[RMDB]
RNA sequence: GGGAACGACUCGAGUAGAGUCGAAAACAUAAGACCUCAGAGCUAAUGAGCCACAUACCUACCCAAGGUGAAAGCUCCUUCUCACGCAAUGUGUAACUCAUGAUUCUCAUGACCCCUGGUUGGAGAGCGCGCUAACACGCCUUCGGGCGUGUUAGAAGUACUCUGUAUGUUUCGACAUACAGAGUACAAAAGAAACAACAACAACAAC
Reactivity to 2A3 in 0.01 (KOAc 150mM, MgCl2 10mM, bicine 150mM(pH8.5), 24C), signal-to-noise 4, nucleotides 027 to 156: c030a060u170a100a060g060a080c020c030u070c090a030g010a020g030c050u090a150a040u070g010a030g030c030c020a020c010a020u160a040c000c030u040a080c030c030c030a050a050g040g000u040g060a110a060a010g020c020u070c000c030u120u030c040u020c040a030c020g050c060a070a130u090g020u010g020u110a080a030c010u020c020a010u030g030a140u300u040c080u020c040a070u090g050a110c010c000c000c040u050g020g010u010u040g040g000a050g000a020g050c060g010c010g000c060u000a000a000c000a000c000g020c000c000u020u040c180g050g000g000c000g000u000g000u000u000a000g000a000a000
Reactivity to DMS in 0.01 (KOAc 150mM, MgCl2 10mM, bicine 150mM(pH8.5), 24C), signal-to-noise 2, nucleotides 027 to 156: c070a170u010a030a070g000a020c040c020u000c060a100g010a080g010c050u000a100a110u010g010a080g050c020c010a030c060a130u000a030c040c000u010a150c000c060c010a120a100g020g010u000g010a080a060a110g000c030u010c040c040u000u000c050u010c070a080c080g000c050a100a110u000g030u010g060u000a060a060c020u000c020a060u010g000a170u010u000c050u000c030a070u000g000a090c010c010c000c040u000g030g030u020u000g010g010a110g010a060g020c050g040c060g030c010u000a010a020c010a020c030g040c010c000u000u010c300g040g020g020c000g050u000g000u010u000a000g000a030a100